Structure probing data (2A3 and DMS) for a 170-nucleotide construct. For 2A3, 4,061 sequencing reads were counted. DMS (dimethyl sulfate) methylates the pairing face of unpaired adenines and cytosines.

RNA sequence: GGGAACGACUCGAGUAGAGUCGAAAAAGGACACGGACGACAAACCGUAAGUUCUACUGCCCUUUAUUGUUGGGUGCACCCUGGGACCCAGUAAUACCCGGGGGGAGGCGGGGUAAACCCAUACUAUCAAGGUACACCUUCGGGUGUACCAAAAGAAACAACAACAACAAC
Reactivity to 2A3 in 0.01 (KOAc 150mM, MgCl2 10mM, bicine 150mM(pH8.5), 24C), signal-to-noise 2, nucleotides 027 to 129: a000g000g000a000c000a000c040g000g100a080c020g070a030c120a030a090a000c000c010g000u020a100a020g000u000u010c030u030a020c060u120g020c000c000c000u010u100u000a120u080u060g060u010u020g020g000g020u000g000c040a040c000c000c000u000g030g020g010a010c010c000c000a000g030u110a070a040u070a160c110c070c000g000g020g000g000g000g010a060g040g040c000g000g000g000g000u030a020a020a010c000c000c010a000u020a070c060u020a020u110c050a080a020
Reactivity to DMS in 0.01 (KOAc 150mM, MgCl2 10mM, bicine 150mM(pH8.5), 24C), signal-to-noise 3, nucleotides 027 to 129: a040g010g010a000c030a050c010g030g040a000c080g050a200c300a130a170a020c000c000g030u000a100a110g000u000u030c040u000a070c100u000g020c070c040c070u020u020u100a010u050u010g000u000u000g010g050g030u050g030c160a100c020c020c040u010g000g000g000a100c060c050c030a100g000u010a030a160u060a140c000c000c130g000g000g000g020g000g000a070g020g070c090g000g040g030g000u020a010a220a040c050c000c030a140u000a040c080u040a110u030c000a120a150